[RMDB]
RNA sequence: GGGAACGACUCGAGUAGAGUCGAAAAAUGAAUAGAAUCAUGGUAAAUACAUAUUGGUGGCGUUUCUUACAACUAAACAAGUCGUAAGGGAACCAGACCAUGUAUAUAUACCUGACAUUCUAAUAAGUGACACAAGUAAUUUCGAUUACUUGUGUCAAAAAGAAACAACAACAACAAC
Reactivity to DMS in 0.01 (KOAc 150mM, MgCl2 10mM, bicine 150mM(pH8.5), 24C), signal-to-noise 9, nucleotides 027 to 126: a080u030g000a100a120u000a010g000a030a010u000c100a100u010g010g010u000a010a080a030u000a010c020a020u010a090u020u020g010g020u000g010g010c150g010u000u000u000c000u000u000a000c010a010a020c000u010a090a130a090c300a100a050g020u000c050g000u000a000a020g000g000g010a010a020c000c010a300g000a050c000c030a010u000g000u000a020u000a050u010a150u000a020c000c010u010g000a160c300a050u010u000c000u000a010a080u020a080a080g010
Reactivity to 2A3 in 0.01 (KOAc 150mM, MgCl2 10mM, bicine 150mM(pH8.5), 24C), signal-to-noise 8, nucleotides 027 to 126: a000u170g060a050a040u040a020g010a010a010u040c030a030u110g010g000u020a030a050a000u010a000c020a010u090a070u180u160g020g000u010g020g040c240g040u010u000u010c010u000u000a000c010a050a000c030u120a220a120a100c080a110a040g010u010c010g010u000a000a020g050g020g010a000a010c010c010a010g050a020c000c000a000u000g020u000a000u000a000u010a010u010a020c000c000u000g010a010c020a030u000u000c010u000a020a070u140a190a030g150